Source: RMDB library OK3TST, as collected in RNAgym. The record gives the reactivity of an RNA of 207 nucleotides to 2A3. 2A3 is a SHAPE reagent: it acylates the 2'-hydroxyl of flexible nucleotides of all four kinds. The RNA was probed in 150 mM KOAc, 10 mM MgCl2 and 150 mM bicine (pH 8.5) at 24 C.

[RMDB]
RNA sequence: GGGAACGACUCGAGUAGAGUCGAAAAAAGAGCUUGGCAAAUAUAGGAUCUUUCCUGGAUUGUAUGUUUCUGAGAUUUGGUGACAGAGCGUCUGCUGUGGAGGAUGGGGAAGGACGGAUCUGGGCUGAAGAAGUAGACAGAGACAGUGGACUUUGGAUCACUCCUCCGUAUUCGUACGGAGGAGUGAAAAAGAAACAACAACAACAAC
Reactivity to 2A3 in 0.01 (KOAc 150mM, MgCl2 10mM, bicine 150mM(pH8.5), 24C), signal-to-noise 1, nucleotides 027 to 156: a040a020g060a020g000c040u070u080g040g000c010a050a090a200u170a180u060a160g000g060a030u020c030u010u130u000c030c010u030g070g000a150u060u010g040u050a260u000g030u000u040u000c030u020g090a110g010a270u100u080u060g050g000u020g000a030c050a060g000a020g010c000g040u000c060u100g080c010u030g000u070g050g020a030g030g000a060u080g010g000g000g010a040a020g060g000a000c040g000g030a020u050c020u080g000g000g030c040u050g000a030a020g000a020a000g070u040a030g020a080c040a000g050a020g000a030c000a110g030u000g160g000a000c000u080u090u060g020g020a030